This 177-nucleotide RNA was probed chemically with DMS and 2A3. In probing experiments dimethyl sulfate is read out at A N1 and C N3, which are open when not base-paired. Reactivities are given for positions 27 through 126. For 2A3, 6,127 sequencing reads were counted.
RNA sequence: GGGAACGACUCGAGUAGAGUCGAAAAGAAAGGCAGCCAUUGCAGCCCACGCAGCCAUUCGAAGCAUGCUUUUGCAUGCCGCCCACGACUGAGGGCAGCUGCGGCACUGAGGGCAGCUGCCGAAAGAGAGCGAGUAAUUAUUCGUAAUUACUCGCUCAAAAGAAACAACAACAACAAC
Reactivity to DMS in 0.01 (KOAc 150mM, MgCl2 10mM, bicine 150mM(pH8.5), 24C), signal-to-noise 5, nucleotides 027 to 126: g020a090a110a160g010g020c020a010g000c010c100a210u000u010g000c110a090g000c040c040c050a190c050g000c020a020g000c000c030a100u000u010c240g010a150a160g000c010a010u000g000c010u000u010u000u010g020c010a000u020g000c020c070g000c020c000c000a080c150g010a100c210u020g010a140g000g010g020c000a100g000c000u000g010c000g000g000c300a080c100u000g000a070g010g000g010c060a130g000c010u000g000c010c010g010a020a060a120g000a160
Reactivity to 2A3 in 0.01 (KOAc 150mM, MgCl2 10mM, bicine 150mM(pH8.5), 24C), signal-to-noise 5, nucleotides 027 to 126: g080a050a060a020g000g020c020a000g010c040c050a120u120u300g050c070a040g010c010c000c000a010c000g040c000a010g000c000c020a080u140u150c090g070a080a000g000c000a000u010g000c000u100u240u300u300g000c000a000u010g010c020c010g000c000c000c000a090c040g300a090c170u190g080a180g020g010g000c000a010g000c000u000g000c020g020g000c080a040c160u150g070a120g000g020g000c000a000g000c010u000g000c000c010g000a000a010a000g090a000

It was measured as part of the RMDB library OK2TRN.